[RMDB]
RNA sequence: GGGAACGACUCGAGUAGAGUCGAAAACAUAGAAUGGCGCAAUAUGUUCGAUAUUAAAAUGACCUGGCUUAUUAGUCCGAAUUCAGACAAAUAUAAACAAAUCCUGCUCAAUAUUAAAAUAUACUAACAGUAAUGUCACUUUCGAGUGACAUUACUGAAAAGAAACAACAACAACAAC
Reactivity to 2A3 in 0.01 (KOAc 150mM, MgCl2 10mM, bicine 150mM(pH8.5), 24C), signal-to-noise 4, nucleotides 027 to 126: c020a010u170a020g190a150a080u040g020g010c030g000c050a030a030u030a020u050g040u050u040c080g030a010u010a050u070u240a040a070a080a050u030g040a060c000c030u010g020g000c000u100u010a040u120u200a140g020u000c030c020g050a030a050u100u070c000a000g040a030c050a020a120a030u140a010u040a050a050a010c020a020a110a020u040c010c000u010g020c000u030c070a060a050u080a070u160u220a050a070a090a000u250a070u100a080c030u020a040a040
Reactivity to DMS in 0.01 (KOAc 150mM, MgCl2 10mM, bicine 150mM(pH8.5), 24C), signal-to-noise 1, nucleotides 027 to 126: c030a060u000a020g030a070a120u000g010g000c030g000c020a060a040u010a040u000g020u020u030c070g050a150u030a030u030u020a060a110a120a020u000g000a120c120c010u020g000g000c020u020u000a070u000u000a080g000u000c000c000g000a060a100u030u020c070a040g010a080c110a030a050a050u040a050u010a190a130a060c080a040a050a030u020c110c050u000g010c060u020c140a050a020u060a000u000u000a040a010a040a120u010a090u030a020c020u010a090a230

Structure probing data (2A3 and DMS) for a 177-nucleotide construct. Values cover nucleotides 27 to 126.